RNA sequence: GGGAACGACUCGAGUAGAGUCGAAAAGAAAACCGGCUAGACCGUGAUAGUUAUCUGGUCAGAACGGGCGCUUGUCGCGUGCCGGGUCGGGGUUCAAUUCCCCGCCGCUAUCAAACAGCCGGAAAAACGACCUAAUCACCUUCGGGUGAUUAGGUCGAAAAGAAACAACAACAACAAC
Reactivity to 2A3 in 0.01 (KOAc 150mM, MgCl2 10mM, bicine 150mM(pH8.5), 24C), signal-to-noise 1, nucleotides 027 to 126: g100a000a040a040a010c010c000g000g030c050u050a000g100a130c040c050g140u010g000a000u000a000g010u100u050a120u140c080u060g080g150u190c090a010g020a030a040c010g000g010g000c000g000c000u170u270g080u240c110g030c000g040u100g300c020c040g000g010g020u050c090g000g000g000g010u040u000c000a000a000u000u030c000c000c000c000g000c000c000g040c000u000a000u000c000a000a000a070c000a010g000c000c000g030g000a000a000a000a000a050
Reactivity to DMS in 0.01 (KOAc 150mM, MgCl2 10mM, bicine 150mM(pH8.5), 24C), signal-to-noise 1, nucleotides 027 to 126: g000a200a000a030a260c050c000g000g010c000u000a000g000a100c130c100g000u000g000a030u010a000g000u000u060a040u000c060u000g000g000u000c040a160g000a020a220c010g030g000g000c000g000c000u000u040g000u000c190g000c000g000u130g000c010c000g040g030g030u120c040g030g000g000g000u000u000c090a220a300u100u000c010c010c010c010g000c000c000g030c000u000a000u000c000a040a060a010c130a000g000c000c000g000g000a000a030a030a000a090

Conditions: 150 mM KOAc, 10 mM MgCl2 and 150 mM bicine (pH 8.5), 24 C. The record gives the reactivity of an RNA of 177 nucleotides to 2A3 and DMS. 2A3 adducts were read by reverse transcription with SuperScript II with manganese. The 2A3 profile rests on 682 reads. The DMS profile rests on 713 reads.